[RMDB]
RNA sequence: GGGAACGACUCGAGUAGAGUCGAAAAGUAACCUUUCCUUGUGAGAACGUUGGUUCGACUCCGCUUGCCGACAAUUUCAUAAGAAAAGUUGCAAAUCGAGCUGCUGAGUUACCCGGAGGGGGGUGGCCAUAUUUACAAUGUUCGCAUUGUAAAUAUGAAAAGAAACAACAACAACAAC
Reactivity to DMS in 0.01 (KOAc 150mM, MgCl2 10mM, bicine 150mM(pH8.5), 24C), signal-to-noise 9, nucleotides 027 to 126: g000u000a020a020c090c040u000u000u000c070c030u000u000g030u000g000a020g000a010a030c300g000u000u000g010g010u000u000c070g010a120c060u010c140c120g020c100u000u000g010c010c000g010a010c020a030a300u000u000u000c000a020u000a020a040g000a020a010a010a020g000u000u000g010c010a020a080a180u000c010g000a030g000c010u000g000c010u000g000a030g000u000u000a110c030c010c010g020g010a080g010g000g010g010g010g020u000g010g010c160
Reactivity to 2A3 in 0.01 (KOAc 150mM, MgCl2 10mM, bicine 150mM(pH8.5), 24C), signal-to-noise 4, nucleotides 027 to 126: g010u010a010a020c010c000u010u020u020c010c000u010u030g010u010g010a020g000a030a010c040g010u010u010g020g030u060u060c060g110a170c080u080c090c070g050c080u040u070g000c010c000g010a010c010a020a020u010u020u020c010a020u020a030a010g010a010a020a000a000g000u010u020g000c010a060a060a130u020c000g000a010g050c010u010g000c010u010g000a010g020u010u030a080c000c010c000g030g110a070g010g020g010g010g000g000u030g020g000c010
Structure probing data (DMS and 2A3) for a 177-nucleotide construct. For DMS the reverse transcriptase was MarathonRT. The DMS profile rests on 19,018 reads. It was measured as part of the RMDB library RFMREP. For 2A3 the reverse transcriptase was SuperScript II with manganese. Values cover nucleotides 27 to 126. The RNA was probed in 150 mM KOAc, 10 mM MgCl2 and 150 mM bicine (pH 8.5) at 24 C.